[RMDB]
Chemical mapping of a 177-nucleotide RNA with 2A3 and DMS. 2A3 is a SHAPE reagent: it acylates the 2'-hydroxyl of flexible nucleotides of all four kinds. The 2A3 profile rests on 1,685 reads. For DMS the reverse transcriptase was MarathonRT. Values are in units of 0.01, from 0 to 300, in steps of 10.
RNA sequence: GGGAACGACUCGAGUAGAGUCGAAAAUCUAGUCGUCUACCGUUACUGCCAACUCGUCCGCGGACACGGAACAUUCGAACAACACAUUAAUACCCUCAACGACCAACGCGAACAAGCACUUGCAGCAGCGUAGAAGGUAUUUCGAUACCUUCUACGCAAAAGAAACAACAACAACAAC
Reactivity to 2A3 in 0.01 (KOAc 150mM, MgCl2 10mM, bicine 150mM(pH8.5), 24C), signal-to-noise 2, nucleotides 027 to 126: u050c020u030a020g080u030c000g060u000c050u090a070c000c020g030u060u060a070c030u010g010c000c020a070a070c060u010c080g090u000c050c040g040c120g040g010a010c010a010c050g020g050a040a030c020a080u080u100c060g040a040a030c060a040a020c010a030c000a040u070u160a130a070u150a170c020c010c000u040c030a050a040c030g010a030c010c020a040a060c000g000c010g030a050a020c020a080a000g080c070a030c070u040u060g000c000a030g030c000a000
Reactivity to DMS in 0.01 (KOAc 150mM, MgCl2 10mM, bicine 150mM(pH8.5), 24C), signal-to-noise 2, nucleotides 027 to 126: u010c050u000a090g020u000c020g010u000c080u020a190c010c020g040u010u030a120c030u000g000c000c020a090a120c060u020c110g010u000c010c040g010c050g010g020a160c110a040c050g000g030a110a070c110a060u000u000c060g010a050a070c080a040a030c130a050c050a030u030u000a020a130u000a120c060c010c000u000c110a010a100c070g000a060c060c010a020a110c090g000c020g000a070a090c090a030a070g000c010a060c040u000u010g000c010a040g000c150a070